[RMDB]
RNA sequence: GGGAACGACUCGAGUAGAGUCGAAAAGCAUCCUGGGGCUGGAGCAGGUCCCAAGGGUACGGCUGUUCGCCGUUUAAAGCGGUACGCGAGCUGGGUUCAGAACGUCGUGAGACAGUUCGGUCCCUAUCACUCCGAAUUCCUUCGGGAAUUCGGAGUGAAAAGAAACAACAACAACAAC
Reactivity to 2A3 in 0.01 (KOAc 150mM, MgCl2 10mM, bicine 150mM(pH8.5), 24C), signal-to-noise 1, nucleotides 027 to 126: g000c000a020u040c000c000u010g000g000g000g000c000u120g060g100a200g090c040a040g050g020u020c000c000c000a000a070g080g030g000u060a030c020g000g000c010u000g060u210u110c100g000c000c000g000u010u000u170a150a180a040g000c030g000g020u040a060c170g030c000g070a010g000c010u080g010g170g000u090u130c020a020g050a060a020c060g040u090c020g040u120g050a110g030a000c010a070g000u080u240c010g000g010u000c000c000c000u000a000u000
An RNA of 177 nucleotides, treated with 2A3 and read out base by base. For 2A3, 629 sequencing reads were counted. The reactions ran in a buffer of 150 mM KOAc, 10 mM MgCl2 and 150 mM bicine (pH 8.5), at 24 C.